[RMDB]
RNA sequence: GGGAACGACUCGAGUAGAGUCGAAAAGAUAUGGAAACUGCCGAUAAGCAGGUAUCGGAAACGAUACUCUGCUUUUGACGGCAUGUUCCUAAGUCAAAAGACUGUUUGGCUUCGGCCAAACAGUCAACGUUCAUGAACUCUUCGGAGUUCAUGAACGAAAAGAAACAACAACAACAAC
Reactivity to DMS in 0.01 (KOAc 150mM, MgCl2 10mM, bicine 150mM(pH8.5), 24C), signal-to-noise 1, nucleotides 027 to 126: g000a020u000a280u010g000g010a030a040a040c050u000g000c000c000g010a160u000a020a040g010c000a010g010g010u000a000u000c000g010g010a080a100a080c000g000a000u000a030c000u030c000u000g000c000u000u000u000u000g000a270c050g000g010c000a000u000g000u010u020c000c000u020a060a180g000u010c020a080a130a070a140g000a000c000u010g010u000u000u000g010g000c000u000u000c190g020g000c000c010a010a000a000c010a010g000u000c000a020a050
This 177-nucleotide RNA was probed chemically with DMS. For DMS the reverse transcriptase was MarathonRT. Values cover nucleotides 27 to 126. The data come from the RNA Mapping Database (RMDB), library TTRDEL.